[RMDB]
An RNA of 177 nucleotides, treated with 2A3 and DMS and read out base by base. The RNA was probed in 150 mM KOAc, 10 mM MgCl2 and 150 mM bicine (pH 8.5) at 24 C. Values cover nucleotides 27 to 126.

RNA sequence: GGGAACGACUCGAGUAGAGUCGAAAACAAACAACAUGCCAAGCAGUAGGGAAGAAGAGAAAGUGACGGUACCUGCAGAAGAAGCGCCGGCUAACAACGUAACAGAAGACGCAGCAAGGCAUGAAAAAGUAGGACUAAAUUUCGAUUUAGUCCUACUAAAAGAAACAACAACAACAAC
Reactivity to 2A3 in 0.01 (KOAc 150mM, MgCl2 10mM, bicine 150mM(pH8.5), 24C), signal-to-noise 6, nucleotides 027 to 126: c020a010a090a020c060a030a010c010a020u010g000c000c000a040a040g010c010a030g030u130a050g040g040g080a080a050g030a070a030g070a040g040a070a160a020g070u090g070a030c050g010g000u030a060c010c000u030g020c020a040g080a200a000g060a060a020g030c010g000c030c020g040g010c020u080a040a010c060a050a030c050g080u140a040a020c020a060g090a090a000g050a030c030g000c020a020g010c000a030a080g000g000c000a010u020g030a030a010a000a000
Reactivity to DMS in 0.01 (KOAc 150mM, MgCl2 10mM, bicine 150mM(pH8.5), 24C), signal-to-noise 5, nucleotides 027 to 126: c080a100a100a160c200a070a250c010a020u000g000c000c000a080a300g010c080a140g020u030a060g010g010g000a090a080g010a130a070g000a080g000a030a110a060g030u010g010a140c050g010g050u010a090c030c040u000g000c060a120g030a090a060g000a080a080g020c050g000c000c010g000g020c040u000a040a050c160a080a100c170g000u010a080a080c110a060g000a110a040g000a030c030g010c080a080g010c030a030a300g020g020c010a030u000g000a020a050a070a050

For 2A3 the reverse transcriptase was SuperScript II with manganese.
For DMS the reverse transcriptase was MarathonRT.